This 177-nucleotide RNA was probed chemically with DMS and 2A3. Values cover nucleotides 27 to 126. 2A3 adducts were read by reverse transcription with SuperScript II with manganese.
[RMDB]
RNA sequence: GGGAACGACUCGAGUAGAGUCGAAAAACGGACAGAAAUCAUGUAUAAGGCUUACAGUUCGGAUAAGACUGCUGAACAAGUUGAAGUCCAAUAGCUAACAGAGGACUGGUAGUAGACAUGGCGGAUAACGUGGGACUCGAUUCGUCGAGUCCCACGUAAAAGAAACAACAACAACAAC
Reactivity to DMS in 0.01 (KOAc 150mM, MgCl2 10mM, bicine 150mM(pH8.5), 24C), signal-to-noise 1, nucleotides 027 to 126: a010c070g030g060a010c020a010g000a000a070a060u100c000a020u000g000u010a060u000a060a070g000g000c010u000u000a140c070a030g000u040u000c060g000g070a000u000a070a300g010a050c070u000g000c140u000g030a180a130c070a020a000g040u000u010g000a080a060g000u000c000c070a000a150u020a080g010c100u020a050a070c250a060g000a170g060g070a000c000u050g000g000u000a090g000u000a160g020a110c210a000u000g000g000c120g000g000a180u020a010
Reactivity to 2A3 in 0.01 (KOAc 150mM, MgCl2 10mM, bicine 150mM(pH8.5), 24C), signal-to-noise 1, nucleotides 027 to 126: a000c190g000g080a020c000a230g130a080a190a000u200c030a130u030g050u180a000u000a090a060g050g020c000u000u000a000c000a000g050u050u000c120g000g000a000u000a000a000g030a000c000u060g000c270u100g060a010a010c000a300a160g000u000u130g200a060a000g000u000c000c000a000a120u060a000g040c030u020a020a240c050a050g000a000g200g000a000c000u000g000g000u000a030g000u000a000g020a000c000a000u000g010g010c130g000g050a110u000a150